An RNA of 177 nucleotides, treated with 2A3 and DMS and read out base by base. Reactivities are rounded to 0.1 and cut off at 0 and 3. The RNA was probed in 150 mM KOAc, 10 mM MgCl2 and 150 mM bicine (pH 8.5) at 24 C. Values cover nucleotides 27 to 126. The data come from the RNA Mapping Database (RMDB), libraries RFM100 and RFMREP.

RNA sequence: GGGAACGACUCGAGUAGAGUCGAAAAGGCUGACGCGCGGCGGCUAGCAGAUGAGAGUUAGGCGCAUAGUCUGGCAGGCCGGGGCGAUAGGCUUGCAGCAGACCCAUGCCGUCCGGUUUGGCACCGGCACUUUAGAAUAAUUCGUUAUUCUAAAGUGAAAAGAAACAACAACAACAAC
Reactivity to 2A3 in 0.01 (KOAc 150mM, MgCl2 10mM, bicine 150mM(pH8.5), 24C), signal-to-noise 7, nucleotides 027 to 126: g040g000c010u020g020a040c040g030c000g010c030g120g010c010g010g020c020u050a020g020c020a020g040a200u180g030a070g010a020g140u090u140a070g050g010c020g000c040a010u030a020g010u000c010u020g050g030c020a020g010g000c000c020g020g000g040g050c080g060a080u090a080g010g000c000u010u030g000c020a040g100c000a000g000a040c000c020c020a020u080g010c010c010g030u020c000c000g010g000u040u070u090g060g000c040a010c010c000g000g000
Reactivity to DMS in 0.01 (KOAc 150mM, MgCl2 10mM, bicine 150mM(pH8.5), 24C), signal-to-noise 9, nucleotides 027 to 126: g000g010c020u000g000a100c100g010c040g010c040g010g020c040g000g010c030u010a060g010c030a080g010a090u010g000a170g010a110g010u010u010a080g010g010c050g010c050a090u010a120g010u000c010u000g010g010c030a070g000g000c000c010g010g010g010g010c060g000a060u020a100g010g010c010u000u000g010c050a090g010c040a040g000a070c010c060c070a140u020g010c020c030g010u010c000c000g000g000u000u000u010g010g020c230a100c000c000g000g000